The record gives the reactivity of an RNA of 207 nucleotides to DMS and 2A3. For 2A3 the reverse transcriptase was SuperScript II with manganese. Conditions: 150 mM KOAc, 10 mM MgCl2 and 150 mM bicine (pH 8.5), 24 C.

RNA sequence: GGGAACGACUCGAGUAGAGUCGAAAAUCCUAAGUCGAAUUAGAACGACAGCCGUUGAAACUAUUUGUCAGAAUCGGAAACGAUUCUUGGAUUUAAUAGUGGAGGCUGUCAAUAAUUCGAUAUGGAAAACCACAACUUACUUCGGUAAGUUGUGGAACGGACUGAAUAAGUUCGCUUAUUCAGUCCGAAAAGAAACAACAACAACAAC
Reactivity to DMS in 0.01 (KOAc 150mM, MgCl2 10mM, bicine 150mM(pH8.5), 24C), signal-to-noise 1, nucleotides 027 to 156: u010c020c000u000a010a200g010u010c000g000a060a030u030u010a000g000a150a140c080g000a060c000a010g000c080c010g030u010u020g000a300a300a020c000u010a020u000u000u000g010u020c010a080g000a010a020u010c000g030g010a300a180a300c040g020a000u000u010c030u020u010g060g000a030u000u010u010a010a040u000a020g020u010g000g010a240g010g040c000u000g010u000c000a120a090u000a000a000u000u000c000g010a080u000a150u000g000g000a130a010a130a160c000c000a020c010a000a010c000u000u000a000c000u000u030c300g040g000u010a000a020g010u000u010g010u000g000g000a020a070
Reactivity to 2A3 in 0.01 (KOAc 150mM, MgCl2 10mM, bicine 150mM(pH8.5), 24C), signal-to-noise 3, nucleotides 027 to 156: u020c010c000u040a120a030g020u000c000g010a000a000u020u010a040g070a290a160c120g000a020c010a000g000c000c020g240u260u030g010a020a000a010c000u000a000u010u010u040g000u010c010a010g010a000a000u000c010g070g000a130a040a050c030g000a000u000u000c010u020u100g070g000a010u240u270u200a010a000u000a000g010u000g000g000a010g000g010c010u000g000u000c000a000a000u000a000a000u000u000c000g000a000u010a070u100g040g020a010a140a030a090c000c010a000c000a000a000c000u000u000a010c000u010u040c140g030g020u000a000a000g000u000u000g000u000g000g000a000a000